[RMDB]
Chemical mapping of a 177-nucleotide RNA with DMS and 2A3. The reactions ran in a buffer of 150 mM KOAc, 10 mM MgCl2 and 150 mM bicine (pH 8.5), at 24 C. For 2A3, 2,477 sequencing reads were counted. DMS (dimethyl sulfate) methylates the pairing face of unpaired adenines and cytosines.

RNA sequence: GGGAACGACUCGAGUAGAGUCGAAAACUCACCGUUAAGUGCGAUAAUGACGACCGCGCCCACCAGACGUUGCUCAGCGAGAGCCUGAUCAAUGGCAGCAUUAACUUUUAUCGGCAGAUGCUCUGGGUCUACCUCAUGGGUUCGCCCAUGAGGUAGAAAAAGAAACAACAACAACAAC
Reactivity to DMS in 0.01 (KOAc 150mM, MgCl2 10mM, bicine 150mM(pH8.5), 24C), signal-to-noise 3, nucleotides 027 to 126: c070u000c030a140c110c040g020u010u000a070a090g020u000g010c030g010a060u010a090a080u010g010a080c100g000a070c050c030g010c100g010c030c020c000a080c060c060a110g000a130c050g000u000u000g000c020u010c020a030g000c070g000a130g010a140g000c150c070u000g010a060u000c050a030a030u000g000g010c050a070g010c030a020u000u020a070a090c060u000u000u000u020a100u000c080g010g000c050a120g000a160u000g000c010u000c010u000g010g010g010
Reactivity to 2A3 in 0.01 (KOAc 150mM, MgCl2 10mM, bicine 150mM(pH8.5), 24C), signal-to-noise 3, nucleotides 027 to 126: c010u030c030a080c020c010g110u060u080a200a040g050u030g100c020g040a040u050a140a130u220g080a040c070g030a030c000c050g030c030g000c030c020c010a050c000c030a010g040a060c030g020u020u050g000c020u010c030a030g030c040g060a150g030a020g150c000c010u060g000a060u090c060a070a050u050g040g040c030a010g000c010a050u080u130a080a050c000u090u070u010u200a090u130c010g020g000c010a010g010a170u030g010c020u000c020u040g010g000g000